[RMDB]
RNA sequence: GGGAACGACUCGAGUAGAGUCGAAAAGGUGAUGGUGGUUCUGGCCAUUAUCUGGGAUCGCGCGGCAGGUCGUCAGGUGACCUCCAGCGCUCACUAAAUCACUGAACAUUUGUUUUAACCACGGGGCCUCGUGGGUAAGGUUCGCCUUACCCACGAGAAAAGAAACAACAACAACAAC
Reactivity to 2A3 in 0.01 (KOAc 150mM, MgCl2 10mM, bicine 150mM(pH8.5), 24C), signal-to-noise 1, nucleotides 027 to 126: g000g000u010g020a050u070g000g060u080g000g070u090u000c030u080g070g020c010c000a040u040u060a020u020c000u030g010g030g070a060u100c050g000c000g040c020g020g070c080a000g020g010u020c000g030u080c050a010g000g290u190g110a010c000c000u010c010c000a000g020c000g020c020u000c000a060c020u150a150a070a030u120c040a070c090u080g030a150a040c020a100u080u100u090g130u070u070u010u130a030a050c030c010a040c070g000g010g080g000c050
Reactivity to DMS in 0.01 (KOAc 150mM, MgCl2 10mM, bicine 150mM(pH8.5), 24C), signal-to-noise 2, nucleotides 027 to 126: g000g010u000g000a020u010g020g020u000g010g010u010u000c020u000g000g010c040c070a030u000u010a010u010c030u000g010g000g040a070u000c040g020c040g030c050g020g000c200a030g000g010u000c000g010u010c290a180g030g020u010g020a010c030c010u000c030c010a070g010c010g000c040u010c080a050c060u020a070a090a080u000c110a050c060u010g010a060a040c050a230u000u000u010g000u000u010u010u000a100a140c030c040a060c160g010g000g000g000c290
This 177-nucleotide RNA was probed chemically with 2A3 and DMS. The data come from the RNA Mapping Database (RMDB), library OK2TRN. 2A3 adducts were read by reverse transcription with SuperScript II with manganese. Values cover nucleotides 27 to 126. DMS adducts were read by reverse transcription with MarathonRT.